RNA sequence: GGGAACGACUCGAGUAGAGUCGAAAAAUCAGUUCGGCCGCUGGGCCGUCAGUACCGCCGCGCGGUCCGAUAACCCGGCCCACCGCCGACGCGCCGGCGGUCCGGCAUCUGCCCAGGGCGGGUUACAGAUUUAAUAAUACUUCGGUAUUAUUAAAUCAAAAGAAACAACAACAACAAC
Reactivity to 2A3 in 0.01 (KOAc 150mM, MgCl2 10mM, bicine 150mM(pH8.5), 24C), signal-to-noise 1, nucleotides 027 to 126: a000u070c030a020g100u140u040c010g140g050c020c020g020c160u050g020g000g000c050c010g020u010c010a010g020u050a020c000c040g000c010c020g030c010g000c010g060g150u030c020c020g010a040u050a070a030c000c020c000g080g080c090c040c020a090c040c120g020c020c000g060a030c010g050c030g030c070c110g000g000c030g000g030u000c010c010g030g010c010a070u080c140u200g000c020c000c020a020g040g020g090c010g050g010g000u030u020a050c040a030
Reactivity to DMS in 0.01 (KOAc 150mM, MgCl2 10mM, bicine 150mM(pH8.5), 24C), signal-to-noise 3, nucleotides 027 to 126: a080u010c060a130g010u000u000c030g020g030c020c010g000c050u000g010g010g050c020c270g010u010c040a060g010u010a030c040c040g010c020c020g010c050g010c010g000g010u010c050c060g000a090u000a070a110c120c110c000g010g010c070c090c100a090c170c080g010c040c020g000a020c040g000c070g010c070c070g030g000c010g010g010u000c030c020g000g010c020a090u000c150u010g010c000c010c030a080g000g000g020c000g000g000g010u010u000a040c160a130

Overview: This 177-nucleotide RNA was probed chemically with 2A3 and DMS. The reactions ran in a buffer of 150 mM KOAc, 10 mM MgCl2 and 150 mM bicine (pH 8.5), at 24 C. DMS adducts were read by reverse transcription with MarathonRT.